Chemical mapping of a 207-nucleotide RNA with 2A3 and DMS.
The DMS profile rests on 4,898 reads.
Conditions: 150 mM KOAc, 10 mM MgCl2 and 150 mM bicine (pH 8.5), 24 C.
DMS (dimethyl sulfate) methylates the pairing face of unpaired adenines and cytosines.
DMS adducts were read by reverse transcription with MarathonRT.
RNA sequence: GGGAACGACUCGAGUAGAGUCGAAAAGAUCAGCGUUCGCGCUGAUCAAAAACCGUAGGAGUGAACGGUCCGAAGAACACUGCACGAAUUUCGAAAGAGACUAUGCAGUGGGAGGACCGAACUCCUAAACGGAAAAAGGGCAUCUUCGGAUGCCCAAGACUAACUUUAUGUUCGCAUAAAGUUAGUCAAAAGAAACAACAACAACAAC
Reactivity to 2A3 in 0.01 (KOAc 150mM, MgCl2 10mM, bicine 150mM(pH8.5), 24C), signal-to-noise 4, nucleotides 027 to 156: g000a000u000c000a000g000c010g050u070u140c190g010c020g010c130u000g020a000u000c000a000a010a010a000a010c000c000g000u010a020g000g010a010g010u030g100a180a060c020g000g000u000c000c000g080a140a020g010a020a010c000a000c000u020g000c000a020c090g140a270a300u050u060u050c040g050a100a070a030g020a030g010a020c060u050a070u080g000c010a010g010u000g000g000g000a020g000g000a000c000c000g000a000a000c000u010c000c000u000a010a040a000c000g030g080a040a010a040a060a110g000g000g000c000a020u020c010u070u150c300g100g000a000u000g000c000c000c010a000a000
Reactivity to DMS in 0.01 (KOAc 150mM, MgCl2 10mM, bicine 150mM(pH8.5), 24C), signal-to-noise 2, nucleotides 027 to 156: g000a010u000c000a010g030c000g040u000u010c300g060c010g050c000u000g020a030u000c000a030a010a050a070a120c000c010g080u000a040g000g000a080g040u000g010a120a100c000g010g000u000c000c000g010a080a210g010a160a210c010a030c010u000g010c000a040c030g000a050a050u000u000u000c000g010a150a100a300g000a070g000a030c040u010a060u000g010c070a040g000u000g000g000g000a140g000g010a020c010c000g020a010a000c010u000c000c000u000a000a020a090c000g000g020a050a070a110a150a120g010g000g000c010a010u000c000u000u020c230g020g020a050u000g010c000c000c000a010a030